[RMDB]
RNA sequence: GGGAACGACUCGAGUAGAGUCGAAAAAGGGCUGGAUUCGUCCAGCCCUGCACAUUCGUACGCAACGAAGCGUACGUCAUUACGCAAAUGACGUAAAGCCUAGAACCACGGACUUCGGUCCGUGGAAGUUCAAAACCAGUUUCGACUGGUUUUGAACAAAAGAAACAACAACAACAAC
Reactivity to DMS in 0.01 (KOAc 150mM, MgCl2 10mM, bicine 150mM(pH8.5), 24C), signal-to-noise 4, nucleotides 027 to 126: a000g000g000g020c000u010g010g000a030u000u010c210g020u010c000c000a000g000c000c010c000u000g000c130a110c130a130u010u000c020g010u000a020c120g020c100a130a100c190g000a090a130g010c020g010u000a000c000g000u000c050a040u010u010a050c290g020c260a090a060a040u000g000a040c000g010u000a040a030a130g010c030c030u010a130g010a110a200c000c000a010c010g000g010a020c000u000u010c150g020g010u000c000c000g020u000g000g000a000a050
Reactivity to 2A3 in 0.01 (KOAc 150mM, MgCl2 10mM, bicine 150mM(pH8.5), 24C), signal-to-noise 3, nucleotides 027 to 126: a000g000g010g000c020u000g000g000a000u030u060c150g050u030c060c010a000g000c000c000c000u010g000c000a010c000a110u090u090c020g000u040a030c030g020c100a190a090c160g170a160a050g000c020g010u010a010c010g000u000c000a030u020u060a040c050g030c110a100a100a250u130g020a020c010g010u040a090a050a040g030c000c030u080a080g050a130a050c010c000a010c000g000g020a000c000u060u010c220g050g000u000c000c000g000u000g000g000a000a000